[RMDB]
Source information
An RNA of 207 nucleotides, treated with DMS and 2A3 and read out base by base. The DMS profile rests on 1,553 reads. For 2A3 the reverse transcriptase was SuperScript II with manganese.

RNA sequence: GGGAACGACUCGAGUAGAGUCGAAAAGCGUACUACUGAGCGAAGAACUGUGGGCCGUGUAUACUACCCACCUACUCCCAAAUAGGAGUAGAGGUAUACCGGCGACCCACAGGGAGCUCAGUAUCGCAAAAGAGUGGCCGUUUCGACGGCCACUCAAACCCUACGUACUAUUCGUAGUACGUAGGGUAAAAGAAACAACAACAACAAC
Reactivity to DMS in 0.01 (KOAc 150mM, MgCl2 10mM, bicine 150mM(pH8.5), 24C), signal-to-noise 1, nucleotides 027 to 156: g010c020g040u000a090c110u000a010c000u000g000a040g010c040g030a190a160g000a120a140c000u000g010u000g030g050g030c000c000g060u040g030u010a050u000a010c000u000a000c040c000c000a300c130c010u000a000c000u000c010c000c030a030a190a260u000a080g000g000a000g000u000a030g000a020g000g020u000a030u000a020c020c090g050g030c010g030a000c010c000c000a050c020a030g000g110g010a180g020c000u010c000a060g010u000a030u000c010g090c020a100a080a060a100g000a010g140u000g070g100c000c000g050u010u030u030c150g070a080c000g000g210c000c000a000c000u000c000a000a030
Reactivity to 2A3 in 0.01 (KOAc 150mM, MgCl2 10mM, bicine 150mM(pH8.5), 24C), signal-to-noise 1, nucleotides 027 to 156: g030c010g040u080a060c020u020a000c000u020g000a010g010c010g150a300a000g020a100a070c000u000g000u000g020g000g110c020c020g120u090g010u110a000u000a000c020u050a050c050c040c070a090c020c000u000a000c000u020c000c040c050a300a300a130u300a090g000g000a000g000u000a000g000a000g000g000u000a000u000a010c000c010g100g010c020g080a030c000c000c000a000c000a000g000g000g010a000g010c010u000c000a000g000u000a000u000c010g000c000a000a040a110a080g050a040g000u010g000g030c000c000g000u030u080u090c150g070a040c000g000g000c010c000a000c000u000c010a010a040
The RNA was probed in 150 mM KOAc, 10 mM MgCl2 and 150 mM bicine (pH 8.5) at 24 C. Source: RMDB library RNAMAK, as collected in RNAgym.